[RMDB]
Source information:
An RNA of 177 nucleotides, treated with 2A3 and DMS and read out base by base. The data come from the RNA Mapping Database (RMDB), libraries RFM100 and RFMREP.

RNA sequence: GGGAACGACUCGAGUAGAGUCGAAAAGUAGAUGCUCAUCCCACUUAUUAUGAUAGCCUGGUUUUUAUAGCCAAUUUAGCUUCAUAAACCCAGGGAUGACGCAGAGCCGAUUUUAGGGUGCCUAUUGACAUCUUGCACGUUUCGACGUGCAAGAUGUAAAAGAAACAACAACAACAAC
Reactivity to 2A3 in 0.01 (KOAc 150mM, MgCl2 10mM, bicine 150mM(pH8.5), 24C), signal-to-noise 2, nucleotides 027 to 126: g020u010a020g000a200u120g000c020u010c000a010u010c000c010c020a030c000u050u060a060u060u000a000u000g050a050u130a080g020c040c020u050g050g090u030u010u000u010u190a240u140a040g010c010c000a030a000u150u220u120a050g020c000u010u000c000a010u040a010a030a050c000c000c050a020g000g000g000a000u000g000a020c070g000c030a020g010a010g020c020c070g090a140u070u060u000u200a090g050g020g000u050g030c010c010u090a080u060u140g020
Reactivity to DMS in 0.01 (KOAc 150mM, MgCl2 10mM, bicine 150mM(pH8.5), 24C), signal-to-noise 3, nucleotides 027 to 126: g000u020a120g010a200u010g030c020u000c010a030u000c000c000c020a190c070u010u010a120u000u000a010u010g000a030u050a010g010c030c160u000g020g000u000u000u050u000u050a120u030a100g020c010c000a040a080u030u020u040a290g010c000u000u010c000a000u000a020a000a300c030c080c080a200g000g000g030a000u000g010a020c240g010c020a090g000a130g000c040c000g040a130u000u020u030u000a130g010g000g000u000g030c050c030u000a090u010u000g000
DMS adducts were read by reverse transcription with MarathonRT.
Conditions: 150 mM KOAc, 10 mM MgCl2 and 150 mM bicine (pH 8.5), 24 C.